An RNA of 177 nucleotides, treated with 2A3 and DMS and read out base by base. The 2A3 profile rests on 1,285 reads. Values cover nucleotides 27 to 126. Source: RMDB library OK1LIB, as collected in RNAgym. The DMS profile rests on 2,384 reads. The reactions ran in a buffer of 150 mM KOAc, 10 mM MgCl2 and 150 mM bicine (pH 8.5), at 24 C.
RNA sequence: GGGAACGACUCGAGUAGAGUCGAAAACACACAGGGAGGAAUUGUUCUUAUUAAAUUAGCUAAUAAAGGCGAUAUUCCUGCCAAAAAUAAUCCAAUUCCUCCAAUAGCUAGUACAAAUUUACUUACAAUUAUACGGUCGAUUCGUCGACCGUAUAAUAAAAGAAACAACAACAACAAC
Reactivity to 2A3 in 0.01 (KOAc 150mM, MgCl2 10mM, bicine 150mM(pH8.5), 24C), signal-to-noise 3, nucleotides 027 to 126: c060a000c090a000c030a110g160g000g040a000g000g010a000a000u000u000g010u000u050c050u010u060a050u040u130a070a150a090u110u140a010g020c020u030a000a090u140a200a300a030g000g000c000g080a080u020a060u240u120c060c060u110g010c030c020a140a010a000a000a000u070a000a020u120c020c000a000a010u000u000c000c000u000c000c000a000a010u020a010g000c050u030a060g040u040a100c100a120a140a150u170u120u030a130c040u000u160a050c060a020
Reactivity to DMS in 0.01 (KOAc 150mM, MgCl2 10mM, bicine 150mM(pH8.5), 24C), signal-to-noise 2, nucleotides 027 to 126: c150a100c260a050c130a100g010g020g020a000g020g020a000a000u000u020g000u000u010c150u020u000a040u000u000a000a070a050u020u030a140g010c020u010a110a060u040a050a110a120g000g030c030g000a060u030a140u000u030c050c050u030g010c000c060a010a060a110a000a060u050a050a120u070c300c010a000a000u000u010c000c010u000c010c000a020a060u030a050g030c060u000a030g020u000a070c200a070a050a140u000u010u010a110c030u000u030a040c180a150